Conditions: 150 mM KOAc, 10 mM MgCl2 and 150 mM bicine (pH 8.5), 24 C. This 177-nucleotide RNA was probed chemically with 2A3. For 2A3, 207 sequencing reads were counted. It was measured as part of the RMDB library OK1LIB.
RNA sequence: GGGAACGACUCGAGUAGAGUCGAAAAUCCUGAGUCGUAAAUGUCCAAAUUUUGUUUACGUUUACAAUAUCGCAUUUUGUGAUGGUUGUGUCAUUAAAAAUUAUUAUCAACGAAGAUCUACUCGGGGUCGUGUGGCUAACUUCGGUUAGCCACACGAAAAAGAAACAACAACAACAAC
Reactivity to 2A3 in 0.01 (KOAc 150mM, MgCl2 10mM, bicine 150mM(pH8.5), 24C), signal-to-noise 1, nucleotides 027 to 126: u040c000c000u000g040a000g000u000c000g000u110a040a040a040u190g110u050c270c270a000a170a110u290u120u260u030g130u020u090u090a000c000g000u050u050u050a000c000a040a020u020a000u210c000g000c190a040u000u000u000u300g000u000g000a000u000g000g060u000u000g000u080g000u060c000a000u270u300a020a060a020a020a020u220u300a300u000u130a300u150c040a000a000c000g000a040a040g060a040u000c000u000a000c000u000c000g000g000g000g000